Structure probing data (DMS and 2A3) for a 177-nucleotide construct.
2A3 adducts were read by reverse transcription with SuperScript II with manganese.
Source: RMDB library OK2TRN, as collected in RNAgym.
Conditions: 150 mM KOAc, 10 mM MgCl2 and 150 mM bicine (pH 8.5), 24 C.
The 2A3 profile rests on 1,534 reads.
[RMDB]
RNA sequence: GGGAACGACUCGAGUAGAGUCGAAAAGAAAGGCAGCCAAUGCAGCCCACGGAGCCAGUCGACGCAUGCUUUUGCAUGCCGCCCACGACUGAGGGCAGCUGCGGCACUGAGGGCAGCUGCCGAAAGACAUUAUAGGCCUCUUCGGAGGCCUAUAAUGAAAAGAAACAACAACAACAAC
Reactivity to DMS in 0.01 (KOAc 150mM, MgCl2 10mM, bicine 150mM(pH8.5), 24C), signal-to-noise 4, nucleotides 027 to 126: g000a080a120a140g020g020c010a010g030c020c080a140a080u010g020c200a110g000c060c000c010a090c090g000g000a110g020c020c000a040g000u000c060g010a110c230g000c000a000u000g010c000u010u010u010u020g010c010a010u010g040c010c080g000c030c010c090a270c090g010a070c120u010g000a130g010g000g010c010a100g040c040u010g010c130g000g010c030a060c060u000g000a050g000g010g010c050a070g000c000u000g010c000c000g000a030a050a100g000a220
Reactivity to 2A3 in 0.01 (KOAc 150mM, MgCl2 10mM, bicine 150mM(pH8.5), 24C), signal-to-noise 2, nucleotides 027 to 126: g080a020a100a040g020g030c040a000g030c040c090a130a070u260g060c030a050g000c000c000c020a020c030g010g010a010g010c010c020a030g070u090c040g070a050c100g000c030a010u000g030c010u140u200u240u300g030c020a000u020g020c000c040g010c000c000c000a060c070g200a070c120u130g040a180g000g020g000c030a000g000c000u020g020c040g050g000c030a000c070u040g020a140g000g010g020c010a010g000c010u000g010c000c000g000a000a000a000g040a000